[RMDB]
About this RNA: The record gives the reactivity of an RNA of 177 nucleotides to 2A3 and DMS. It was measured as part of the RMDB library OK1LIB. For 2A3, 816 sequencing reads were counted. In probing experiments dimethyl sulfate is read out at A N1 and C N3, which are open when not base-paired.
RNA sequence: GGGAACGACUCGAGUAGAGUCGAAAACAAGUAUAACGAUUUGAUUUUUUAUCACGGUGACAAUCUGACGGAUUUGUUCAAAUGCGCCGCGUGGAUAACGUACAAUUUUGUAAAUUUACAUCCGUUCUGAAAGGGAGUGGUUCGCCACUCCCUUUCAAAAAGAAACAACAACAACAAC
Reactivity to 2A3 in 0.01 (KOAc 150mM, MgCl2 10mM, bicine 150mM(pH8.5), 24C), signal-to-noise 2, nucleotides 027 to 126: c030a110a060g070u140a070u130a300a100c120g030a210u180u110u160g090a070u020u020u150u090u150u140a110u090c000a000c080g000g000u080g070a070c010a030a110u010c080u120g010a000c030g000g070a100u020u070u180g050u010u050c020a000a010a010u140g050c010g020c020c030g000c020g020u030g070g020a190u090a070a010c000g010u010a080c050a020a010u040u000u030u060g100u080a010a000a130u120u130u020a080c050a010u000c000c010g010u080u050c030
Reactivity to DMS in 0.01 (KOAc 150mM, MgCl2 10mM, bicine 150mM(pH8.5), 24C), signal-to-noise 2, nucleotides 027 to 126: c110a110a070g010u020a070u040a060a060c110g000a060u040u040u000g050a080u000u010u040u030u000u000a000u040c000a050c130g020g030u010g040a050c170a070a150u020c070u020g030a050c030g000g000a060u000u000u000g040u080u030c000a000a030a030u030g000c300g010c060c000g060c020g050u020g000g020a020u080a020a000c130g000u030a090c060a010a210u050u000u040u000g040u030a040a090a130u030u010u010a090c210a080u000c050c000g000u020u000c200